[RMDB]
RNA sequence: GGGAACGACUCGAGUAGAGUCGAAAACUGGCCAUCUGCAGUGUCACGCUCCGUGUAUUUGACAAGCUGAGUUGGACACUCUGUGUGGUAGAGUGUCAGUUUGUCAAAUACCCCAAGUGUGGCUCAUGCCUAUAAACCUAAGUGUUCGCACUUAGGAGUUGUUGACAUAGUUCGCUAUGUCAACAACAAAAGAAACAACAACAACAAC
Reactivity to DMS in 0.01 (KOAc 150mM, MgCl2 10mM, bicine 150mM(pH8.5), 24C), signal-to-noise 2, nucleotides 027 to 156: c070u000g030g030c030c050a220u010c060u000g010c060a140g010u010g020u010c000a010c060g010c010u000c060c120g020u000g050u000a020u000u000u010g000a010c040a020a070g020c000u010g010a130g040u010u010g060g030a300c020a010c010u000c020u020g000u020g030u000g030g000u010a000g010a070g020u000g000u000c000a030g010u010u000u000g000u000c010a030a020a020u000a000c010c050c000c040a030a080g040u000g030u000g010g000c010u000c050a060u000g000c020c060u000a090u000a110a170a190c000c010u000a010a010g040u000g030u000u000c300g040c000a010c000u000u000a000g000g010a030
Reactivity to 2A3 in 0.01 (KOAc 150mM, MgCl2 10mM, bicine 150mM(pH8.5), 24C), signal-to-noise 9, nucleotides 027 to 156: c050u070g120g020c060c020a170u100c080u110g020c030a020g020u000g010u030c000a000c010g010c010u030c030c040g040u060g000u060a010u000u000u000g000a000c000a010a000g000c010u040g020a050g240u200u160g200g040a020c000a010c010u010c000u010g170u030g110u190g110g070u130a010g000a000g000u010g030u000c000a000g000u000u000u000g000u000c000a000a000a000u000a000c010c000c020c000a030a020g000u010g000u000g010g000c000u000c010a080u030g000c000c020u140a130u160a200a120a070c000c000u000a000a000g010u000g030u070u100c220g030c080a000c000u000u000a000g000g020a020
About this RNA
The record gives the reactivity of an RNA of 207 nucleotides to DMS and 2A3. The data come from the RNA Mapping Database (RMDB), library RFM130. The 2A3 profile rests on 12,118 reads. Values are in units of 0.01, from 0 to 300, in steps of 10. Conditions: 150 mM KOAc, 10 mM MgCl2 and 150 mM bicine (pH 8.5), 24 C.